[RMDB]
RNA sequence: GGGAACGACUCGAGUAGAGUCGAAAAAGAGUACAGUCACGCUUGUGUGCUGUGUGUGUACAUGCAUGUGCGUGCAUGUGAGCAUGUGUGCCUGUGUGCAUGUGUGUACUGUGUGUGUGUGCAUGUGCAUGUGUGGGGUGUGCAGGUGCAUGGACCAUCAUAUUAGUCGAUUCGUCGACUAAUAUGAAAAAGAAACAACAACAACAAC
Reactivity to 2A3 in 0.01 (KOAc 150mM, MgCl2 10mM, bicine 150mM(pH8.5), 24C), signal-to-noise 9, nucleotides 027 to 156: a000g130a020g020u090a030c030a020g020u030c030a040c060g110c150u240u230g030u040g020u050g080c030u020g020u020g010u020g010u010g010u060a000c000a000u010g000c000a010u020g010u020g060c020g020u020g000c010a020u150g030u050g060a040g020c010a020u030g010u010g010u020g050c010c060u300g080u120g070u140g140c000a010u020g010u000g000u010g030u090a060c030u060g030u030g010u010g000u000g000u000g010u000g040c000a010u010g010u000g020c010a010u010g040u010g020u050g030g040g000g000u070g020u030g020c030a030g000g070u050g040c050a050u050g040g030a030c020c010a040
Reactivity to DMS in 0.01 (KOAc 150mM, MgCl2 10mM, bicine 150mM(pH8.5), 24C), signal-to-noise 3, nucleotides 027 to 156: a080g010a140g020u000a060c030a100g010u000c040a050c050g030c090u000u010g030u000g030u000g040c010u000g020u010g020u000g020u000g010u000a030c010a020u000g000c010a020u000g020u000g030c030g030u000g000c010a020u010g020u000g010a190g020c020a030u000g030u000g020u000g010c010c070u000g000u010g030u000g010c000a020u000g020u000g020u010g010u000a030c040u000g010u010g020u010g030u010g030u010g020u000g000c030a020u010g020u000g000c000a010u000g020u000g020u000g010g010g020g000u000g010u000g020c030a080g010g020u010g000c030a110u000g010g010a090c040c040a210
The record gives the reactivity of an RNA of 207 nucleotides to 2A3 and DMS. Conditions: 150 mM KOAc, 10 mM MgCl2 and 150 mM bicine (pH 8.5), 24 C. Source: RMDB library OK3TST, as collected in RNAgym. Reactivities are given for positions 27 through 156. For 2A3, 33,627 sequencing reads were counted.